[RMDB]
RNA sequence: GGGAACGACUCGAGUAGAGUCGAAAAGCCAGAUCCUUCGGGAUCUGGCAAACAAGUGCAUGGUGUGGGCACUUGAUACCUCACCGACAAGCUGAAACACAAAAAGCGGGUCGUUCGCGACCCGCAACUAACAGAUCAAGUUCGCUUGAUCUGUUAGAAAAGAAACAACAACAACAAC
Reactivity to 2A3 in 0.01 (KOAc 150mM, MgCl2 10mM, bicine 150mM(pH8.5), 24C), signal-to-noise 4, nucleotides 027 to 126: g000c000c000a010g000a010u020c000c010u040u130c250g060g000g000a000u000c000u010g000g030c000a010a000a000c000a000a010g010u000g000c010a030u150g040g010u020g030u020g010g030g000c020a010c010u030u140g010a000u040a050c000c010u020c020a040c010c020g080a100c050a070a030g040c040u160g110a150a180a010c080a010c050a060a120a050a040a010g020c010g000g010g000u000c000g020u050u080c250g000c010g090a000c000c000c000g010c000a000a000
Reactivity to DMS in 0.01 (KOAc 150mM, MgCl2 10mM, bicine 150mM(pH8.5), 24C), signal-to-noise 4, nucleotides 027 to 126: g010c000c010a010g010a010u000c000c000u000u010c230g040g000g020a010u000c000u010g010g010c010a010a030a060c100a140a010g010u000g020c000a020u000g010g000u000g010u000g030g000g030c000a000c000u000u000g000a050u000a020c010c000u000c020a030c030c010g010a160c250a080a100g010c140u000g000a100a050a070c110a060c150a070a060a070a120a140g010c000g010g010g010u000c010g000u000u010c180g010c010g010a010c000c000c000g020c010a000a030
Source information: Source: RMDB library M2PK50, as collected in RNAgym. Structure probing data (2A3 and DMS) for a 177-nucleotide construct. 2A3 adducts were read by reverse transcription with SuperScript II with manganese. Values cover nucleotides 27 to 126. For 2A3, 7,698 sequencing reads were counted. For DMS the reverse transcriptase was MarathonRT.